[RMDB]
RNA sequence: GGGAACGACUCGAGUAGAGUCGAAAACGAGGUGCUAGGCAAGAAUGCGGCCCUGGUGGCGCAGAUGGCGAGCGACGGCGUGCCCAUGCUGGAUAACGGCGUGCCCAUCAAGUACAUCGGCCCGCGGCUAGGGUGCUGAGUUCGCUCAGCACCCUAGAAAAGAAACAACAACAACAAC
Reactivity to 2A3 in 0.01 (KOAc 150mM, MgCl2 10mM, bicine 150mM(pH8.5), 24C), signal-to-noise 1, nucleotides 027 to 126: c020g010a040g000g000u080g010c070u100a060g010g070c030a050a010g090a200a190u080g010c000g000g080c000c000c000u110g110g030u090g020g020c030g000c050a010g000a010u030g000g090c120g030a160g000c080g040a050c030g010g110c010g030u020g070c000c000c010a050u160g050c070u180g010g010a060u040a260a030c030g110g000c030g020u040g030c040c000c000a020u070c020a040a010g030u020a070c000a010u010c000g010g000c000c000c020g080c050g000g040
Reactivity to DMS in 0.01 (KOAc 150mM, MgCl2 10mM, bicine 150mM(pH8.5), 24C), signal-to-noise 2, nucleotides 027 to 126: c080g000a070g040g030u000g020c030u000a050g010g030c070a050a130g000a120a120u010g020c020g050g000c010c000c030u010g020g000u020g000g000c040g020c090a160g000a070u000g000g000c080g000a070g030c060g040a060c120g030g030c030g010u000g000c040c020c070a150u000g000c170u020g020g000a090u010a070a130c050g010g000c020g040u000g000c000c030c010a080u020c100a120a110g010u000a060c040a060u000c030g000g000c040c030c060g000c120g000g020